[RMDB]
Chemical mapping of a 207-nucleotide RNA with 2A3. The RNA was probed in 150 mM KOAc, 10 mM MgCl2 and 150 mM bicine (pH 8.5) at 24 C.

RNA sequence: GGGAACGACUCGAGUAGAGUCGAAAAAGAGCGAUGAACGCCAUGAACAACGAGGUCAAUGCAUGAUGAUGUCCCUGGCGAUGUCUAUCACGUGGUGCUUACCAGACUUCUUAUCGCGAGGUACAACGGCGAUGAUCGGUCUCCUGUCCGCUAUCACCCUGGGGCAAGGAUUCGUCCUUGCCCCAGGAAAAGAAACAACAACAACAAC
Reactivity to 2A3 in 0.01 (KOAc 150mM, MgCl2 10mM, bicine 150mM(pH8.5), 24C), signal-to-noise 1, nucleotides 027 to 156: a000g020a000g030c030g100a060u030g110a160a000c000g030c000c000a030u140g050a040a020c150a110a030c180g070a080g060g000u000c030a220a060u260g100c030a070u070g000a060u000g000a000u070g090u000c000c030c040u040g040g000c060g030a030u050g010u050c040u050a160u190c070a020c060g070u130g100g100u160g150c120u120u030a090c000c040a020g000a000c030u020u070c000u170u290a000u100c050g000c010g050a000g010g050u000a050c130a100a080c000g000g000c070g030a080u300g000a000u030c010g000g100u000c000u030c000c000u020g000u000c000c020g030c070u070a070u300c030a060c000